[RMDB]
RNA sequence: GGGAACGACUCGAGUAGAGUCGAAAAAAUGCCGCCUCAGUUUCAAGCUCUUUCGUGGCACUGUAAACAGUCCUAUUGAGUUAGGGGCAGUCAACCACGUUGCGAAGCUAAAUUAUCUGGUCGAGAGUUACGAUUCCCUACUUCGGUAGGGAAUCAAUGAAAUGGAAUACUUCGGUAUUCCAUUUCAAAAAGAAACAACAACAACAAC
Reactivity to DMS in 0.01 (KOAc 150mM, MgCl2 10mM, bicine 150mM(pH8.5), 24C), signal-to-noise 2, nucleotides 027 to 156: a060a050u000g020c040c000g020c020c040u000c010a110g020u010u000u000c030a090a090g010c020u000c020u000u000u000c010g030u000g030g030c060a020c020u000g040u000a010a090a060c060a150g010u000c000c000u000a030u000u000g000a290g030u010u000a030g020g010g000g030c000a000g000u000c010a090a010c000c020a010c040g020u000u010g020c100g030a090a070g020c060u010a010a050a060u000u010a090u000c020u000g040g010u000c030g010a110g000a120g000u000u000a160c070g010a030u000u000c000c000c010u000a000c000u000u010c290g060g040u010a010g030g000g000a000a000u000c000a030a190
Reactivity to 2A3 in 0.01 (KOAc 150mM, MgCl2 10mM, bicine 150mM(pH8.5), 24C), signal-to-noise 2, nucleotides 027 to 156: a000a010u100g030c060c020g040c010c000u060c030a040g010u000u070u070c070a080a010g000c000u000c030u030u030u030c030g060u030g030g020c060a010c020u010g040u090a070a150a170c060a080g070u060c000c000u010a060u030u070g100a120g230u030u020a040g000g000g010g000c000a010g000u000c010a000a040c010c020a020c000g010u010u020g050c060g120a090a030g000c050u080a040a120a110u160u110a110u090c060u060g040g030u070c070g030a020g010a010g190u110u070a060c070g000a000u010u000c000c000c000u020a010c000u010u050c180g070g020u000a000g000g000g000a000a000u000c000a000a010

This 207-nucleotide RNA was probed chemically with DMS and 2A3.
For DMS, 3,921 sequencing reads were counted.
For 2A3, 1,304 sequencing reads were counted.